Description: An RNA of 177 nucleotides, treated with DMS and read out base by base. The reactions ran in a buffer of 150 mM KOAc, 10 mM MgCl2 and 150 mM bicine (pH 8.5), at 24 C. For DMS, 1,005 sequencing reads were counted.
RNA sequence: GGGAACGACUCGAGUAGAGUCGAAAAGGUUAUCGAGAGGAUGUUACGGCAGUGCAGCAAUCCAGGACGCGGUAUAAGCCUAUAGACGUAGAUUACUCACGGCUUAUAGAUGACGAAAUGAGUAGGAUACAGAGGACUACUUCGGUAGUCCUCUGUAAAAAGAAACAACAACAACAAC
Reactivity to DMS in 0.01 (KOAc 150mM, MgCl2 10mM, bicine 150mM(pH8.5), 24C), signal-to-noise 1, nucleotides 027 to 126: g020g000u000u010a030u000c060g000a190g020a090g020g020a050u010g000u010u010a090c140g000g010c050a090g060u010g040c070a070g030c040a050a110u000c080c040a040g000g010a210c070g030c000g000g020u000a030u000a040a060g010c000c010u000a130u000a070g020a050c200g020u000a030g010a130u020u000a050c010u000c020a120c220g010g000c000u010u010a030u000a070g000a090u000g020a050c080g020a020a110a030u020g010a040g000u010a050g010g000a240